[RMDB]
RNA sequence: GGGAACGACUCGAGUAGAGUCGAAAAUUGAACGGAUUCGUCCGUUCAACGCGUGCGAUCCAAACGUAGUACAAAAGUACAGACGAAAGCACAAGGAUCAAUUGAUACAGCCGUUCGCGGCUGUAAAAGCUUGAUGAAAGUUCGCUUUCAUCAAGCUAAAAGAAACAACAACAACAAC
Reactivity to DMS in 0.01 (KOAc 150mM, MgCl2 10mM, bicine 150mM(pH8.5), 24C), signal-to-noise 2, nucleotides 027 to 126: u000u000g030a000a010c010g040g010a030u000u000c160g010u000c000c000g040u000u000c000a000a010c210g000c170g000u000g010c040g020a070u010c010c020a090a150a200c020g030u000a070g000u000a010c010a120a080a060a090g010u000a010c000a050g000a100c050g000a080a050a100g000c070a020c110a070a190g000g000a060u000c030a090a160u000u000g000a250u000a020c000a000g010c010c000g020u000u000c150g010c000g040g000c010u010g010u010a000a060a090
Reactivity to 2A3 in 0.01 (KOAc 150mM, MgCl2 10mM, bicine 150mM(pH8.5), 24C), signal-to-noise 2, nucleotides 027 to 126: u020u010g000a000a000c000g000g020a010u070u060c140g030u020c030c000g000u030u000c000a000a010c010g060c040g060u070g000c050g010a020u030c020c010a000a160a000c040g070u080a010g000u030a030c000a020a300a070a060g020u000a010c000a090g110a040c060g090a220a000a030g010c030a010c030a090a020g050g010a020u050c010a010a100u110u100g020a050u040a090c030a000g000c000c000g000u030u070c180g010c020g090g000c000u000g000u000a000a000a000
Description
Structure probing data (DMS and 2A3) for a 177-nucleotide construct. 2A3 adducts were read by reverse transcription with SuperScript II with manganese. The RNA was probed in 150 mM KOAc, 10 mM MgCl2 and 150 mM bicine (pH 8.5) at 24 C. The DMS profile rests on 1,415 reads.